Structure probing data (DMS and 2A3) for a 177-nucleotide construct. For DMS the reverse transcriptase was MarathonRT.

RNA sequence: GGGAACGACUCGAGUAGAGUCGAAAAUGUACUGCGUCUCAGCUAAAAAUUCAUUUAUUUUUCAUUCUGCCUAUAUUAACAGUUCAGCUGAUUAGUUAUGCUGAGAUAUGGGAGAUUUUUUUAUGCAGAUUAAAUUACCUUUCGAGGUAAUUUAAUCAAAAGAAACAACAACAACAAC
Reactivity to DMS in 0.01 (KOAc 150mM, MgCl2 10mM, bicine 150mM(pH8.5), 24C), signal-to-noise 3, nucleotides 027 to 126: u000g000u000a140c080u000g020c060g010u000c040u000c080a090g010c030u010a010a040a070a080a050u000u020c070a100u000u010u000a070u010u010u000u010u000c070a080u010u000c020u000g010c140c030u000a010u000a030u000u000a080a080c090a050g000u010u000c170a050g010c160u010g000a120u000u000a070g020u000u000a070u010g020c000u000g010a080g010a010u010a010u000g000g000g000a080g000a000u000u010u010u010u050u010u020a080u050g000c140a150
Reactivity to 2A3 in 0.01 (KOAc 150mM, MgCl2 10mM, bicine 150mM(pH8.5), 24C), signal-to-noise 2, nucleotides 027 to 126: u060g000u050a060c040u020g020c020g050u000c040u020c100a020g090c040u100a080a040a110a140a020u130u120c060a010u050u130u250a110u070u190u140u040u060c020a060u050u050c000u040g220c010c030u070a080u030a020u120u080a210a060c020a050g010u150u130c030a010g030c010u040g060a290u130u110a040g030u050u000a040u140g000c000u000g000a000g010a020u000a010u020g010g060g000a050g040a050u160u130u010u010u020u030u130a090u180g000c020a010

Conditions: 150 mM KOAc, 10 mM MgCl2 and 150 mM bicine (pH 8.5), 24 C.